[RMDB]
Chemical mapping of a 177-nucleotide RNA with 2A3 and DMS.
The 2A3 profile rests on 3,211 reads.
Values are in units of 0.01, from 0 to 300, in steps of 10.
Source: RMDB library M2PK50, as collected in RNAgym.
RNA sequence: GGGAACGACUCGAGUAGAGUCGAAAAGAUAAUGUCUUCGGACAUUAUCCACGCCUAAAGGCUUUAAUUAAUUAGCUAACCCUGCUAAUUAAAAUGGCAUUAACAACUGUCCAUUCGUGGACAGUAAAUGACAUUGUUUGUUCGCAAACAAUGUCAUAAAAGAAACAACAACAACAAC
Reactivity to 2A3 in 0.01 (KOAc 150mM, MgCl2 10mM, bicine 150mM(pH8.5), 24C), signal-to-noise 3, nucleotides 027 to 126: g000a000u010a000a000u000g000u000c010u010u060c250g070g020a000c010a010u010u010a000u000c000c000a010c040g030c000c030u100a180a130a010g120g000c000u120u100u040a050a050u040u000a020a000u000u000a030g000c020u040a130a130c020c020c090u070g000c010u020a010a000u020u040a010a020a010a030u110g020g010c020a060u110u160a070a070c080a070a030c000u000g000u000c000c010a020u070u060c200g110u030g000g000a000c010a000g000u010a000a020
Reactivity to DMS in 0.01 (KOAc 150mM, MgCl2 10mM, bicine 150mM(pH8.5), 24C), signal-to-noise 3, nucleotides 027 to 126: g000a010u000a000a000u010g000u000c000u000u010c230g010g010a020c020a000u010u010a000u000c010c070a120c300g000c000c010u000a060a080a120g010g000c000u000u010u010a090a130u000u000a000a000u000u000a000g020c010u010a100a150c250c210c170u000g010c000u000a000a010u000u000a000a020a100a110u010g000g000c010a130u000u010a080a070c170a110a070c010u000g000u000c000c000a040u000u000c250g020u000g010g010a010c000a000g010u000a010a040